Source information: Structure probing data (2A3 and DMS) for a 207-nucleotide construct. DMS adducts were read by reverse transcription with MarathonRT. The RNA was probed in 150 mM KOAc, 10 mM MgCl2 and 150 mM bicine (pH 8.5) at 24 C.
RNA sequence: GGGAACGACUCGAGUAGAGUCGAAAACAGCAAAAAGGAACCGAUUCCCACCAAGUUCGGAAAGAGAUACCGGGCGAGGCGCUGAAGAAACAAUCUCGCUUCAGACACCCCAAGGACUCGACUGAAGAAUGCACGCCAUCGUUCGCGAUGGCGUGAACAUUACAGUCCCGUUCGCGGGACUGUAAUGAAAAGAAACAACAACAACAAC
Reactivity to 2A3 in 0.01 (KOAc 150mM, MgCl2 10mM, bicine 150mM(pH8.5), 24C), signal-to-noise 3, nucleotides 027 to 156: c040a010g030c050a080a080a050a040a040g120g010a080a030c080c060g030a090u000u060c000c030c000a000c030c040a100a050g040u030u040c040g030g030a060a180a030g040a010g010a030u080a090c000c010g000g000g050c070g060a090g050g040c130g010c040u020g010a030a000g020a040a170a010c090a090a150u060c090u080c210g020c000u010u010c020a040g030a100c010a070c020c020c000c030a000a110g010g010a040c020u040c040g020a020c030u060g010a010a010g070a090a060u110g050c000a000c000g000c000c010a010u000c000g050u080u030c150g020c010g080a000u000g030g000c000g000u010g000a000a000
Reactivity to DMS in 0.01 (KOAc 150mM, MgCl2 10mM, bicine 150mM(pH8.5), 24C), signal-to-noise 1, nucleotides 027 to 156: c050a150g010c040a060a070a090a110a120g030g000a090a140c070c040g140a260u000u000c020c000c000a200c020c040a240a220g000u000u000c000g010g050a100a090a180g020a160g000a200u000a050c030c050g010g000g020c110g000a060g010g030c010g000c010u000g000a040a040g010a100a040a110c000a100a090u000c200u010c120g000c020u000u000c010a060g000a290c080a100c020c020c000c000a020a150g000g000a070c050u010c010g020a200c020u000g020a060a100g010a090a100u000g030c010a000c000g000c000c010a020u010c000g020u020u020c210g040c050g030a010u020g000g030c000g030u010g000a010a120